[RMDB]
Conditions: 150 mM KOAc, 10 mM MgCl2 and 150 mM bicine (pH 8.5), 24 C. The record gives the reactivity of an RNA of 177 nucleotides to 2A3 and DMS. Source: RMDB library 15KREP, as collected in RNAgym. 2A3 adducts were read by reverse transcription with SuperScript II with manganese.
RNA sequence: GGGAACGACUCGAGUAGAGUCGAAAAGUGGUAGCACUUCAACAGGAAAUGACAAUUGUCAAAUGUAAGGGUUUAAAUAAACCUUUCGUGAAGGACAAUGUCAGUUUCGUUGCUGAUGAUUCAGGUACCUGCUGUAUAGGUUCGCCUAUACAGCAGGAAAAGAAACAACAACAACAAC
Reactivity to 2A3 in 0.01 (KOAc 150mM, MgCl2 10mM, bicine 150mM(pH8.5), 24C), signal-to-noise 1, nucleotides 027 to 126: g030u050g020g080u220a160g060c020a020c000u050u010c010a010a030c040a080g080g010a000a040a040u000g000a010c020a110a300u020u010g000u010c010a050a030a040u040g060u120a030a000g030g030g000u040u040u020a180a230a100u200a060a040a030c010c000u000u000u000c020g000u030g080a090a010g130g010a000c010a010a010u010g010u000c010a040g000u000u000u010c010g000u000u060g000c050u040g040a190u040g010a050u180u090c040a010g060g040u020a040
Reactivity to DMS in 0.01 (KOAc 150mM, MgCl2 10mM, bicine 150mM(pH8.5), 24C), signal-to-noise 1, nucleotides 027 to 126: g040u010g000g020u020a110g020c040a090c020u010u000c020a040a050c090a140g010g000a000a010a020u000g010a010c000a070a070u000u010g000u010c000a070a150a070u010g010u010a000a020g000g010g000u000u010u000a090a110a160u010a040a000a000c000c000u000u000u000c040g010u000g000a170a200g020g010a020c000a020a010u010g000u000c010a000g010u000u000u000c030g000u000u000g000c020u000g010a020u000g010a150u000u000c090a020g020g020u000a140